[RMDB]
RNA sequence: GGGAACGACUCGAGUAGAGUCGAAAAUUCUGAGUUUUCACACUUAGCUACCUUUGCUGAGUUGGAAGCUGCGCAGAAAGCCUAUCAGGAAGCUAUGGACUCUGGUGACACCUCACCACAAGUUCUUCACCACAGAGCUUCGGCUCUGUGAAAAGAAACAACAACAACAAC
Reactivity to 2A3 in 0.01 (KOAc 150mM, MgCl2 10mM, bicine 150mM(pH8.5), 24C), signal-to-noise 8, nucleotides 027 to 129: u030u000c020u020g010a000g010u000u000u000u000c030a060c010a000c050u040u010a000g000c020u090a160c060c050u200u200u180g000c000u010g000a000g000u000u000g000g000a010a000g010c010u040g030c120g000c020a010g070a040a040a010g000c000c000u080a140u180c060a030g120g040a060a010g020c060u080a080u130g010g000a010c010u010c050u050g000g000u000g020a030c050a080c080c060u040c020a030c010c000a040c030a040a050g000u030u000c000u020u050c050a070c060
Reactivity to DMS in 0.01 (KOAc 150mM, MgCl2 10mM, bicine 150mM(pH8.5), 24C), signal-to-noise 5, nucleotides 027 to 129: u000u000c030u040g020a000g010u010u020u000u040c020a000c220a000c020u020u010a000g040c000u000a110c220c120u060u070u040g050c030u000g020a010g040u000u000g020g010a040a000g000c020u020g040c100g060c040a020g060a080a060a110g020c020c010u010a070u040c090a100g000g000a070a080g040c080u010a040u050g020g010a060c000u010c270u040g040g010u000g010a100c230a110c190c150u050c000a040c000c000a050c230a110a040g010u010u030c000u000u000c060a070c230